Annotation: Chemical mapping of a 177-nucleotide RNA with DMS and 2A3. The RNA was probed in 150 mM KOAc, 10 mM MgCl2 and 150 mM bicine (pH 8.5) at 24 C. Reactivities are given for positions 27 through 126. The DMS profile rests on 3,493 reads.
RNA sequence: GGGAACGACUCGAGUAGAGUCGAAAAGAUCCAACCGGAUGGGACGGCCUUGUUAUCCCCGGCGGCAUGCCCGGGGCUUCCAAUAUUGCGGGCUCGGUAACGGCGGUGACCUUCUUAAAGGAUAUGCCCCAUACCAUCCAUUCGUGGAUGGUAUGGGAAAAGAAACAACAACAACAAC
Reactivity to DMS in 0.01 (KOAc 150mM, MgCl2 10mM, bicine 150mM(pH8.5), 24C), signal-to-noise 2, nucleotides 027 to 126: g000a080u000c040c010a090a200c110c090g000g000a130u020g010g030g020a060c070g050g040c010c010u000u020g010u030u010a050u000c010c000c000c040g020g030c020g040g000c070a120u020g000c100c020c010g000g010g010g030c110u000u000c030c000a110a100u080a050u060u010g000c110g000g030g000c060u010c010g000g020u010a090a050c090g010g000c050g000g030u020g010a090c010c040u000u010c130u010u000a060a110a020g010g030a060u020a040u020g000c110
Reactivity to 2A3 in 0.01 (KOAc 150mM, MgCl2 10mM, bicine 150mM(pH8.5), 24C), signal-to-noise 6, nucleotides 027 to 126: g050a030u010c000c010a010a070c020c020g060g030a110u020g040g000g060a030c020g030g010c000c000u060u170g040u050u170a130u150c020c000c010c000g030g000c030g080g100c140a090u190g030c010c040c030g000g010g000g000c000u060u010c010c000a060a080u140a170u200u120g040c040g010g010g030c110u150c120g000g000u030a070a030c030g020g010c010g000g070u070g030a120c010c000u050u090c020u060u170a150a070a010g040g000a030u050a050u280g090c020